[RMDB]
Source information
Structure probing data (2A3 and DMS) for a 177-nucleotide construct.

RNA sequence: GGGAACGACUCGAGUAGAGUCGAAAAUGAACUCACAUCUCCAAAUCCGGAGGAAGACUACUUAGUACGAUACUUGUUCAGAGGGAUAGGGACUGCAUCUUCCUCUUGGUAUAAGGCAUCCCAUCUCGUUCUGUCAGGCUUUCGAGCCUGACAGAACAAAAGAAACAACAACAACAAC
Reactivity to 2A3 in 0.01 (KOAc 150mM, MgCl2 10mM, bicine 150mM(pH8.5), 24C), signal-to-noise 1, nucleotides 027 to 126: u040g030a040a040c020u020c040a040c010a110u080c060u010c000c020a030a080a300u000c010c010g000g010a000g040g000a040a000g000a000c010u110a010c020u120u190a010g070u080a050c050g060a110u020a150c040u100u140g090u160u130c020a080g100a110g140g040g000a000u040a220g130g030g000a000c090u090g040c010a080u000c000u000u000c000c000u080c040u000u160g000g040u020a090u060a140a010g070g000c000a010u000c050c000c000a030u040c020u010c060
Reactivity to DMS in 0.01 (KOAc 150mM, MgCl2 10mM, bicine 150mM(pH8.5), 24C), signal-to-noise 1, nucleotides 027 to 126: u000g030a100a060c150u010c070a140c110a080u000c020u000c010c070a040a090a030u000c020c010g000g000a020g000g000a030a020g000a020c300u000a090c120u000u000a070g080u010a070c240g000a110u010a150c070u000u000g000u010u000c070a110g010a170g000g010g000a030u000a080g000g000g010a020c120u000g000c090a050u020c020u000u000c000c000u000c010u000u000g090g000u000a070u020a060a070g000g000c110a090u000c000c000c000a170u000c080u010c070
Background:
Source: RMDB library OK2TRN, as collected in RNAgym. DMS (dimethyl sulfate) methylates the pairing face of unpaired adenines and cytosines. For 2A3 the reverse transcriptase was SuperScript II with manganese. Conditions: 150 mM KOAc, 10 mM MgCl2 and 150 mM bicine (pH 8.5), 24 C. DMS adducts were read by reverse transcription with MarathonRT.